[RMDB]
RNA sequence: GGGAACGACUCGAGUAGAGUCGAAAAAUAGCGGCGACGUAUGCGGUCGCCUCGCAAUGGGAUGGUGGCUACGUGGCCAAUUACACGAUCACCCAAUUCGGGCGCGACUUCGAUGACCGAUUGGCGGACUACCGGAGCAAUUCGUUGCUCCGGUAGUAAAAGAAACAACAACAACAAC
Reactivity to 2A3 in 0.01 (KOAc 150mM, MgCl2 10mM, bicine 150mM(pH8.5), 24C), signal-to-noise 2, nucleotides 027 to 126: a050u140a030g110c050g000g040c000g060a010c000g100u050a040u250g080c030g020g040u000c000g020c000c000u000c020g110c040a060a240u170g000g010g060a060u060g000g180u050g140g000c010u030a030c090g060u070g050g000c060c010a010a030u110u060a070c110a010c030g080a050u080c030a100c030c000c020a050a040u220u160c010g000g000g010c070g000c020g070a050c030u260u170c090g230a300u040g010a040c000c010g030a090u010u070g050g020c070g030g020
Reactivity to DMS in 0.01 (KOAc 150mM, MgCl2 10mM, bicine 150mM(pH8.5), 24C), signal-to-noise 2, nucleotides 027 to 126: a110u000a120g020c250g010g010c000g040a070c010g010u000a060u010g020c100g040g040u000c030g020c030c000u000c020g040c160a110a100u010g000g000g010a060u010g020g010u000g050g030c040u020a050c070g050u000g000g050c060c000a050a160u010u000a070c160a080c100g030a100u010c070a110c090c000c040a040a040u010u000c030g010g000g000c050g020c020g000a170c180u010u010c070g000a080u010g010a040c030c010g000a150u000u000g000g010c130g000g010